[RMDB]
RNA sequence: GGGAACGACUCGAGUAGAGUCGAAAACGAAACACAGUGAGUGGACGGAAUAAAUCCCCUUCCCACCUCCCCACUGUCCACUCACUGUCUUCCUAAGAGGAAAUAUAAAUCGGGGGUGGGAAGGGGAAGUAUACCAGUGGUUCGCCACUGGUAUACUAAAAGAAACAACAACAACAAC
Reactivity to DMS in 0.01 (KOAc 150mM, MgCl2 10mM, bicine 150mM(pH8.5), 24C), signal-to-noise 3, nucleotides 027 to 126: c160g020a060a130a110c250a060c000a000g000u000g000a040g000u000g020g000a030c000g010g000a140a050u070a030a090a120u020c000c010c000c000u010u000c000c000c000a000c000c010u010c000c000c190c080a080c110u000g030u010c000c000a000c000u000c000a000c020u000g000u000c120u020u030c000c050u020a090a120g000a050g000g030a070a100a070u090a070u010a060a110a090u050c240g000g000g000g000g000u000g000g000g000a000a000g010g000g010g010a010
Reactivity to 2A3 in 0.01 (KOAc 150mM, MgCl2 10mM, bicine 150mM(pH8.5), 24C), signal-to-noise 9, nucleotides 027 to 126: c070g050a030a050a000c110a010c000a030g000u000g000a000g000u000g000g010a000c020g030g040a050a040u110a110a120a080u130c000c000c000c010u000u000c000c000c000a000c000c000u030c040c070c030c030a050c030u030g000u010c000c000a000c010u010c000a000c000u000g000u000c010u010u000c000c000u040a080a020g060a060g160g190a050a110a010u300a050u130a040a140a070u240c100g010g000g000g000g000u000g000g000g000a000a000g000g000g010g000a000